[RMDB]
RNA sequence: GGGAACGACUCGAGUAGAGUCGAAAACGUGUGUCGCCUCGCAGUGUGGGUGCGGCCUCGUACCGGGCAGCGUGACCCUGACCUACAGCAAACGCCCCAGAGCCCAAGGGCCUCCCGGGGCGCGUCUACUGCGUCGAUAGUUCGCUAUCGACGCAGUAAAAGAAACAACAACAACAAC
Reactivity to 2A3 in 0.01 (KOAc 150mM, MgCl2 10mM, bicine 150mM(pH8.5), 24C), signal-to-noise 1, nucleotides 027 to 126: c020g000u020g000u050g000u000c000g000c000c000u000c000g120c070a220g140u200g030u200g240g030g100u240g020c010g000g010c020c010u010c000g000u000a080c000c070g000g020g000c000a050g000c010g000u040g040a150c000c020c060u070g020a120c000c010u010a030c010a070g070c010a090a050a000c030g000c000c000c000c000a000g010a020g020c000c000c000a090a180g000g000g000c030c020u000c020c010c040g000g000g020g000c010g000c000g000u000c070u040